RNA sequence: GGGAACGACUCGAGUAGAGUCGAAAAGGGAUGUGGUGGUUAUCGCAUCUGCUGACACGCUUUCCCAAGCCGUCGCCAUGUUGAACAAACAUAAGAUCGGCGCGCUGGUGGUGUGCGAUGAGGCCGACCGUUUUAGUCCGUUCGCGGACUAAAACGGAAAAGAAACAACAACAACAAC
Reactivity to DMS in 0.01 (KOAc 150mM, MgCl2 10mM, bicine 150mM(pH8.5), 24C), signal-to-noise 2, nucleotides 027 to 126: g000g030g000a040u000g050u010g020g050u000g010g000u010u020a020u000c020g020c010a020u000c030u000g010c070u010g010a120c060a120c100g000c100u020u000u000c020c010c030a260a120g000c000c000g040u000c030g010c230c190a030u000g010u010u010g010a110a060c200a100a000a010c010a030u030a150a090g010a050u040c030g000g000c000g010c160g030c000u000g010g050u000g010g010u010g020u010g030c020g010a040u000g010a240g030g010c050c010g000a170
Reactivity to 2A3 in 0.01 (KOAc 150mM, MgCl2 10mM, bicine 150mM(pH8.5), 24C), signal-to-noise 2, nucleotides 027 to 126: g040g000g000a010u040g000u050g020g080u000g040g270u250u170a010u100c010g000c020a000u020c030u080g040c020u050g010a050c000a000c080g020c030u040u130u090c010c000c000a020a010g020c040c040g000u000c020g000c010c030a040u020g030u000u040g090a120a060c130a200a020a010c020a070u060a030a040g060a180u140c010g000g000c020g000c100g000c050u030g010g030u020g010g000u020g000u090g050c050g030a100u080g070a030g020g060c010c020g040a100